[RMDB]
RNA sequence: GGGAACGACUCGAGUAGAGUCGAAAAAGGCUGACUAAACUAAAAUAAUUCAGUUGGGGAACUGCAAGUAAUCUUUGACUCUUGGUGAUAAUGUCUCCUUUGUACAUGAGAACUUCUUUUCCCUUUAUGGUGUUUGUUUACGUUUAGGGUGAAUGUAAAAAUAAUGACCAUUCGUGGUCAUUAUUUUAAAAGAAACAACAACAACAAC
Reactivity to 2A3 in 0.01 (KOAc 150mM, MgCl2 10mM, bicine 150mM(pH8.5), 24C), signal-to-noise 4, nucleotides 027 to 156: a000g060g020c070u050g040a060c010u050a010a050a030c030u060a050a040a040a110u090a070a100u190u110c030a040g060u160u110g050g000g000g020a000a010c010u010g020c080a010a010g010u070a040a110u020c020u110u080u090g020a060c020u020c030u110u200g030g030u030g080a030u050a270a070u240g080u020c040u040c030c030u030u060u050g040u080a110c050a060u110g010a020g010a110a060c000u010u020c000u000u010u000u010c000c000c000u000u110u060a090u060g050g020u020g050u060u070u040g020u010u030u020a020c040g000u010u020u020a040g020g060g030u080g070a090a100u140g030u190a020
Reactivity to DMS in 0.01 (KOAc 150mM, MgCl2 10mM, bicine 150mM(pH8.5), 24C), signal-to-noise 2, nucleotides 027 to 156: a060g020g010c040u020g020a130c040u000a020a030a130c020u010a100a120a090a130u000a040a070u000u000c020a110g030u010u000g000g030g000g020a020a060c050u000g020c130a020a080g010u010a040a130u000c020u000u000u000g020a070c010u020c080u030u000g010g010u010g010a090u000a090a130u010g010u000c010u010c010c010u000u000u020g020u000a160c050a060u000g010a040g010a060a050c040u000u000c010u000u000u000u010c000c010c010u000u010u000a070u010g020g020u010g020u000u010u000g000u000u000u000a070c140g020u000u000u000a040g020g020g030u000g020a060a070u000g000u000a030